[RMDB]
RNA sequence: GGGAACGACUCGAGUAGAGUCGAAAAGAUAUGGAACGGGAUGUGACAUGCUCUAGGGUCGGAAACGACCCGAUGAGCAACAGCACAUCACCGUUCCUAAGUCAAAAUCUGCGCUUCGGCGCAGAAAGUUAUUGUAAAGGUUCGCCUUUACAAUAACAAAAGAAACAACAACAACAAC
Reactivity to 2A3 in 0.01 (KOAc 150mM, MgCl2 10mM, bicine 150mM(pH8.5), 24C), signal-to-noise 5, nucleotides 027 to 126: g010a010u060a030u140g000g000a000a000c000g010g010g010a010u010g020u010g070a120c090a250u180g000c010u000c000u030a040g000g010g000u000c010g010g020a120a060a060c010g000a010c010c030c000g000a000u040g000a000g020c000a000a000c020a000g030c000a000c000a000u000c000a010c000c000g000u000u000c000c000u000a010a010g000u010c000a000a020a010a300u020c000u010g000c010g000c010u060u090c300g200g000c030g000c000a000g000a010a010a000
Reactivity to DMS in 0.01 (KOAc 150mM, MgCl2 10mM, bicine 150mM(pH8.5), 24C), signal-to-noise 8, nucleotides 027 to 126: g010a050u010a300u010g010g010a010a000c000g010g000g010a020u000g000u000g010a080c120a300u000g000c000u000c000u000a270g010g000g010u000c010g010g000a110a080a200c000g000a010c000c010c000g010a030u000g010a010g010c000a010a030c270a170g000c000a000c000a010u000c000a090c000c000g020u000u000c000c000u000a000a080g000u010c050a140a080a150a170u000c000u000g010c000g020c000u010u010c190g030g010c010g010c000a010g000a000a040a090